[RMDB]
RNA sequence: GGGAACGACUCGAGUAGAGUCGAAAACAGCUUACAAUUCACUGGCUCCUAAGGGCGCGCCUAACACAUCUCAGUGGAUAGUUACAACGGGAGAAGACAAUGCCACCACAUACACAUUUGGCAUUGCUUCCACGAAGGGAGACAAUAUUACUAAGGAGUGUAGCAAGUAGUUCGCUACUUGCUACACAAAAGAAACAACAACAACAAC
Reactivity to DMS in 0.01 (KOAc 150mM, MgCl2 10mM, bicine 150mM(pH8.5), 24C), signal-to-noise 1, nucleotides 027 to 156: c040a110g010c040u000u000a160c070a030a080u000u010c090a030c030u010g000g040c020u000c030c030u000a040a090g000g010g010c040g000c120g010c030c120u030a060a120c120a040c060a090u000c050u040c060a260g020u000g020g020a080u010a060g030u000u010a080c070a080a150c050g020g000g020a190g020a040a080g000a060c000a010a030u000g000c040c000a050c190c090a040c120a200u000a140c210a070c120a150u000u010u000g030g000c000a030u000u000g000c000u000u000c000c000a100c000g000a100a100g030g060g000a050g020a040c070a110a070u000a120u000u000a060c050u000a040a080g000g000a220
Reactivity to 2A3 in 0.01 (KOAc 150mM, MgCl2 10mM, bicine 150mM(pH8.5), 24C), signal-to-noise 5, nucleotides 027 to 156: c010a020g060c030u110u180a040c070a090a160u110u120c050a040c060u050g030g000c030u020c040c030u060a070a130g030g000g000c070g000c010g000c020c000u110a140a040c070a010c030a130u080c080u040c080a010g020u030g010g010a020u020a070g040u080u100a060c040a110a060c100g000g060g020a170g020a050a010g070a020c010a030a000u000g020c000c000a040c060c020a150c070a160u300a070c100a030c030a110u240u140u090g000g000c000a000u010u000g000c000u010u000c020c010a040c080g060a060a070g010g000g000a040g020a010c000a000a070u130a040u250u100a070c070u090a060a040g040g010a100